Notes:
Structure probing data (2A3 and DMS) for a 177-nucleotide construct. The DMS profile rests on 1,362 reads. It was measured as part of the RMDB library RFM100. The reactions ran in a buffer of 150 mM KOAc, 10 mM MgCl2 and 150 mM bicine (pH 8.5), at 24 C. Reactivities are given for positions 27 through 126.
RNA sequence: GGGAACGACUCGAGUAGAGUCGAAAAUGCAGGCUCAGCAUCCCUGGGGCCUCAACUCCUUAUCCAUCCUGGGCUGCUCCUCGCAGUAAGCCCUCUCCUUGGGGUCCUGGCCCUCUACCUCCCAGCCGAUCGUUAGGGAGUUCGCUCCCUAACGAUCAAAAGAAACAACAACAACAAC
Reactivity to 2A3 in 0.01 (KOAc 150mM, MgCl2 10mM, bicine 150mM(pH8.5), 24C), signal-to-noise 4, nucleotides 027 to 126: u120g000c020a010g030g000c010u020c110a020g020c020a060u060c030c000c000u010g000g000g010g020c020c000u000c010a040a070c050u080c010c030u120u150a080u080c050c010a020u040c020c050u050g020g010g000c010u020g000c010u010c030c050u060c060g020c050a010g020u080a110a030g000c010c000c000u010c010u020c010c010u020u040g020g000g000g000u000c000c010u020g010g020c000c000c000u020c010u040a050c010c030u020c000c000c000a030g060c050c050
Reactivity to DMS in 0.01 (KOAc 150mM, MgCl2 10mM, bicine 150mM(pH8.5), 24C), signal-to-noise 1, nucleotides 027 to 126: u020g000c170a010g010g050c080u010c010a050g000c140a100u000c000c000c000u000g000g000g010g000c000c010u020c050a020a020c080u000c000c010u000u100a060u000c080c080a120u000c110c020u040g000g020g000c050u000g010c010u000c000c300u000c180g050c050a080g050u030a060a060g000c050c000c060u040c010u000c000c090u000u000g000g000g040g010u010c010c110u020g030g000c110c080c050u000c020u010a020c090c110u000c010c010c000a060g000c120c050